[RMDB]
RNA sequence: GGGAACGACUCGAGUAGAGUCGAAAAUCAGAUCAGAAGAAGCUGCACGACCAUCUGAACAGAACAAGGAGGAUGAGGUGGUUGCAAUGGACACAGAUGCCCCAUCCAGGAAAAGAAGGAGUGACGCUAGUAGGUUAACUUUCGAGUUAACCUACUAAAAAGAAACAACAACAACAAC
Reactivity to 2A3 in 0.01 (KOAc 150mM, MgCl2 10mM, bicine 150mM(pH8.5), 24C), signal-to-noise 4, nucleotides 027 to 126: u040c010a020g040a050u040c030a010g120a220a010g050a060a020g050c030u030g010c050a010c040g130a120c010c010a010u050c010u050g040a070a040c010a080g100a080a070c050a070a070g140g030a040g020g010a060u040g020a020g030g010u040g040g000u070u050g000c010a050a130u130g100g030a040c010a000c010a080g150a060u180g020c000c000c000c000a010u000c030c010a010g130g030a040a090a010a010g020a040a030g020g020a020g030u030g020a020c040g000c040
Reactivity to DMS in 0.01 (KOAc 150mM, MgCl2 10mM, bicine 150mM(pH8.5), 24C), signal-to-noise 8, nucleotides 027 to 126: u010c060a070g010a090u000c060a080g010a110a080g010a100a100g010c050u000g020c060a110c100g010a100c060c040a050u000c020u000g000a070a120c130a070g000a070a070c170a060a090g010g010a100g020g010a060u010g010a070g000g020u000g010g020u000u000g010c060a100a090u010g020g000a100c100a060c070a070g010a100u010g000c030c040c010c040a050u000c030c030a120g010g000a040a040a050a070g000a070a060g000g000a150g010u000g010a070c110g000c160

Background: Structure probing data (2A3 and DMS) for a 177-nucleotide construct. The reactions ran in a buffer of 150 mM KOAc, 10 mM MgCl2 and 150 mM bicine (pH 8.5), at 24 C. For DMS the reverse transcriptase was MarathonRT. Source: RMDB library OK2TRN, as collected in RNAgym. The DMS profile rests on 8,684 reads. For 2A3, 5,039 sequencing reads were counted.